RNA sequence: GGGAACGACUCGAGUAGAGUCGAAAAGAGCGAUUAGACAAAGGGGUAGAGGUACAUAUUAGAUAGCUGUAUAAUCGUUCAAGUUACAUCAAAACAUCUUCAAUAUUUAUUACUUACUUUCCUUUCUGCCAGAGUACGGUAUUCGUACCGUACUCAAUAACCAGUAACCAUUCGUGGUUACUGGUUAAAAAGAAACAACAACAACAAC
Reactivity to 2A3 in 0.01 (KOAc 150mM, MgCl2 10mM, bicine 150mM(pH8.5), 24C), signal-to-noise 4, nucleotides 027 to 156: g040a000g000c000g020a040u040u060a020g030a070c050a020a090a020g020g020g030g040u060a020g010a040g070g050u100a060c050a040u180a070u080u100a080g040a120u100a030g030c050u030g020u030a040u030a050a050u040c020g010u010u030c010a030a000g020u030u110a070c060a080u100c050a060a100a010a040c010a080u070c050u160u070c050a070a040u030a150u180u140u090a140u110u110a060c010u070u020a030c010u070u100u110c010c010u050u130u060c030u040g060c000c030a040g000a000g000u000a000c000g000g000u000a020u000u080c100g010u010a000c000c010g000u000a000c000u000c000a000a000
Reactivity to DMS in 0.01 (KOAc 150mM, MgCl2 10mM, bicine 150mM(pH8.5), 24C), signal-to-noise 2, nucleotides 027 to 156: g000a100g000c010g010a120u000u000a090g020a100c050a070a050a070g000g000g010g040u000a050g010a090g020g010u020a020c090a070u010a090u000u000a070g010a090u000a090g020c030u010g020u010a010u000a030a050u000c060g000u010u000c100a050a100g000u000u000a080c050a070u000c050a050a060a060a120c030a060u000c040u000u000c030a040a120u000a040u000u000u000a050u030u010a100c030u000u000a040c060u010u030u000c030c010u000u000u000c030u000g020c060c050a140g000a030g030u000a000c020g030g040u000a050u000u020c300g000u010a010c010c010g030u000a020c000u000c000a040a030